Chemical mapping of a 170-nucleotide RNA with 2A3 and DMS. The 2A3 profile rests on 1,933 reads. The DMS profile rests on 3,687 reads. The data come from the RNA Mapping Database (RMDB), library 15KLIB. Reactivities are given for positions 27 through 129.
RNA sequence: GGGAACGACUCGAGUAGAGUCGAAAAGCAUGUCAUCUUGCUAAAGCCUUACAAACAUACAGCGAGACUGGUAGUGAUCUUCUUUACCAACCACCCAACUGUAGCAUAACCUCUGGCGUGUUGCAAAUAACGGUGGGCUUCGGCCCACCGAAAAGAAACAACAACAACAAC
Reactivity to 2A3 in 0.01 (KOAc 150mM, MgCl2 10mM, bicine 150mM(pH8.5), 24C), signal-to-noise 2, nucleotides 027 to 129: g040c000a000u020g030u010c000a060u050c050u000u050g000c010u050a190a000a000g000c000c010u060u080a060c100a080a180a000c070a000u220a030c010a000g000c010g000a030g000a110c020u060g030g000u020a120g030u060g020a000u000c000u100u000c000u000u170u010a100c050c010a040a060c040c010a020c050c000c000a000a070c040u070g000u000a000g000c020a020u090a140a070c010c000u040c040u050g010g000c020g020u030g050u050u020g030c050a050a030a000u070a090a000
Reactivity to DMS in 0.01 (KOAc 150mM, MgCl2 10mM, bicine 150mM(pH8.5), 24C), signal-to-noise 1, nucleotides 027 to 129: g000c030a290u010g050u000c050a110u000c000u000u020g240c040u000a050a230a000g060c050c030u030u120a100c150a220a000a080c140a220u030a050c080a170g000c030g020a110g000a100c100u010g000g050u000a080g050u070g010a060u000c000u120u070c000u000u040u060a060c080c000a120a000c050c080a060c040c030c040a020a190c060u000g010u000a020g010c030a060u000a050a130c080c030u000c040u000g020g090c110g080u010g020u050u000g050c000a070a000a040u000a080a170